[RMDB]
RNA sequence: GGGAACGACUCGAGUAGAGUCGAAAAAUUUUUGAAAUAAAAUGUUUAUUCUUGAUAUAAUGACAAUGGAGACCUGUAAGGGUCUGGUAUUCCUUGCACACACUUCUCAAUUAACUACUCAAAACCCCAUCUAUCUUGCGUUCGCGCAAGAUAGAUGAAAAGAAACAACAACAACAAC
Reactivity to 2A3 in 0.01 (KOAc 150mM, MgCl2 10mM, bicine 150mM(pH8.5), 24C), signal-to-noise 2, nucleotides 027 to 126: a000u110u070u030u090u060g000a050a000a120u210a060a150a020a050u120g020u000u230u060a110u130u060c010u080u070g020a020u000a020u090a300a240u170g070a020c010a030a130u270g020g000a070g000a010c000c000u040g030u250a060a080g060g000g020u000c000u000g030g020u010a140u060u090c000c000u010u050g000c050a000c030a000c000a000c040u090u020c000u000c020a010a040u050u050a050a040c050u070a010c010u000c070a090a110a020a090c000c030c020